[RMDB]
RNA sequence: GGGAACGACUCGAGUAGAGUCGAAAAGACGAGGCUUUCGAAGGCUAUCUGCGCGAGGAGGGUGAUGGCCUGAUGUUCGGCCCCUAUGAAAGGACCGAGCAUCUGAAGCUCUUUGCGGAGAACGGCGCCAUACUAGCGCCUUCGGGCGCUAGUAUGGAAAAGAAACAACAACAACAAC
Reactivity to DMS in 0.01 (KOAc 150mM, MgCl2 10mM, bicine 150mM(pH8.5), 24C), signal-to-noise 1, nucleotides 027 to 126: g000a030c050g000a100g020g000c070u010u010u020c070g010a080a030g020g000c030u020a060u000c020u000g000c000g000c010g010a050g020g000a060g000g000g030u050g000a080u010g010g040c060c030u000g000a010u030g010u000u000c020g000g050c000c020c000c050u020a230u050g050a160a170a060g000g000a090c000c000g000a030g000c000a000u000c000u000g000a130a080g000c000u000c030u000u020u000g020c070g000g020a070g010a010a100c080g000g000c020g000
Reactivity to 2A3 in 0.01 (KOAc 150mM, MgCl2 10mM, bicine 150mM(pH8.5), 24C), signal-to-noise 6, nucleotides 027 to 126: g100a010c100g020a040g040g100c060u100u120u100c060g070a090a040g090g000c030u030a030u050c020u130g090c010g000c000g020a040g020g020a020g010g030g030u140g060a130u110g120g030c000c020u010g000a000u000g000u010u000c000g020g000c050c160c000c010u110a150u300g230a200a130a020g020g000a010c000c000g000a000g000c010a000u000c000u020g030a020a020g020c000u000c000u050u030u040g010c020g020g070a020g000a160a060c080g030g000c000g000